RNA sequence: GGGAACGACUCGAGUAGAGUCGAAAACGGUUCGUACGCGAACCGAAGCGAUAACGUUCGCGUUAUCGCAAGUGGUGCGUACGCGCACCACAAGAGAAUUCGUACGCGAAUUCUCAACCAUUGUCGUGAGACAAUGGAGAUAAGCCGUACGCGGCUUAUCAAGGAUGUUCGGGUGGCUGCUUAAGCGCUUCUAUACUUAAGUACCGAAUGUUAUACCGUUAUUAUCUAGUGAUAAUAACGAUGCCUAUUUCUAUGAAAUAGAAGCUAGAAUGAUAUUCGUAUCAUUCAAAAGAAACAACAACAACAAC
Reactivity to 2A3 in 0.01 (KOAc 150mM, MgCl2 10mM, bicine 150mM(pH8.5), 24C), signal-to-noise 9, nucleotides 027 to 266: c010g000g010u000u000c000g020u040a030c290g000c010g160a000a000c000c000g000a070a010g000c000g000a000u000a000a000c010g010u030u070c250g010c000g120u000u000a000u000c000g000c010a010a030g000u000g000g000u020g010c010g010u040a050c270g010c000g000c080a000c000c000a000c010a020a040g010a000g000a000a010u020u020c010g010u040a030c300g010c000g160a000a010u000u000c000u000c000a010a060c000c000a000u000u000g000u000c020g020u040g040a040g000a020c000a000a000u000g000g000a060g000a000u000a000a000g000c010c010g020u030a020c290g040c020g130g000c000u000u000a000u000c000a000a040g120g000a010u030g000u010u000c000g010g000g040u060g020g000c010u010g000c000u010u000a000a000g010c030g020c150u050u000c020u050a110u020a140c000u010u000a000a000g000u000a020c000c000g000a000a000u010g020u030u080a220u100a260c060c030g000u000u000a000u000u000a000u000c070u090a120g150u090g300a010u000a000a000u000a000a000c000g010a020u050g000c000c000u110a270u060u190u110c110u140a260u250g110a070a040a030u030a010g010a010a000g010c010u030a030
Reactivity to DMS in 0.01 (KOAc 150mM, MgCl2 10mM, bicine 150mM(pH8.5), 24C), signal-to-noise 3, nucleotides 027 to 266: c030g010g000u000u000c010g020u010a050c180g040c010g010a010a010c010c000g010a060a060g000c000g000a000u000a000a010c020g020u000u010c200g020c000g000u000u000a000u000c000g000c010a040a040g030u000g010g020u000g010c000g040u020a070c240g050c040g040c110a010c010c010a000c030a070a110g000a030g000a040a000u000u110c010g020u020a110c210g060c010g000a010a010u000u000c000u000c010a130a140c000c000a010u000u000g000u000c000g000u010g000a120g000a010c010a010a000u000g000g000a140g000a010u000a000a000g010c010c010g030u010a100c180g040c010g010g010c000u000u010a000u000c010a190a090g000g010a020u000g010u000u000c020g000g010g010u000g020g010c060u000g000c020u000u000a010a020g020c170g010c100u000u010c070u020a090u010a140c010u000u000a020a010g010u010a010c010c020g010a020a010u000g000u000u000a050u010a070c160c000g000u000u000a000u000u000a000u000c000u010a170g010u010g000a000u000a010a000u000a000a010c000g010a020u010g030c020c000u000a070u000u000u010c090u010a090u020g000a060a060a060u010a010g000a040a030g000c130u010a100